This 207-nucleotide RNA was probed chemically with 2A3 and DMS. Values cover nucleotides 27 to 156. Source: RMDB library RNAMAK, as collected in RNAgym. Conditions: 150 mM KOAc, 10 mM MgCl2 and 150 mM bicine (pH 8.5), 24 C. DMS adducts were read by reverse transcription with MarathonRT. For 2A3 the reverse transcriptase was SuperScript II with manganese. In probing experiments dimethyl sulfate is read out at A N1 and C N3, which are open when not base-paired.

[RMDB]
RNA sequence: GGGAACGACUCGAGUAGAGUCGAAAAGGGGUCGGACCCGUAAGAGGUGGAGCUUUUGACGAGCUGAAGCCUCCACGGCUCGAUAAGCUCCACUCCCCACCUUACAGGGUCCGACGGAGGCACCCAAAACUAUUCAUGUGUUCGCACAUGAAUAGAACUGUAGCUUAAUCUUCGGAUUAAGCUACAGAAAAGAAACAACAACAACAAC
Reactivity to 2A3 in 0.01 (KOAc 150mM, MgCl2 10mM, bicine 150mM(pH8.5), 24C), signal-to-noise 4, nucleotides 027 to 156: g010g000g010g000u010c000g000g000a000c030c000c000g000u010a000a000g010a010g030g000u000g000g010a020g000c030u080u240u300u300g180a110c060g000a000g010c000u010g010a140a000g020c000c000u000c000c000a020c000g000g000c000u010c000g070a140u060a300a040g000c000u000c000c000a000c000u010c000c000c000c000a020c000c000u000u000a010c040a230g000g000g010u010c000c000g000a000c010g000g000a000g000g000c000a020c000c000c000a030a080a040a070c000u000a010u000u000c000a000u000g020u000g050u060u100c260g040c110a000c000a010u000g000a000a000u000a000g000a030a020
Reactivity to DMS in 0.01 (KOAc 150mM, MgCl2 10mM, bicine 150mM(pH8.5), 24C), signal-to-noise 2, nucleotides 027 to 156: g000g000g030g010u000c030g050g020a120c050c000c000g040u000a000a020g030a280g020g020u010g000g010a030g000c010u000u000u000u010g010a180c130g030a030g020c030u010g030a010a230g030c000c010u010c000c030a300c110g010g010c010u000c010g000a120u000a090a060g050c010u000c000c010a050c030u020c300c050c000c010a300c040c000u000u000a050c030a180g030g010g030u000c020c000g010a040c030g040g070a030g070g030c010a120c000c000c000a110a090a130a300c010u010a000u000u010c000a010u010g010u000g020u000u010c300g020c030a010c010a010u000g000a000a000u010a000g010a070a140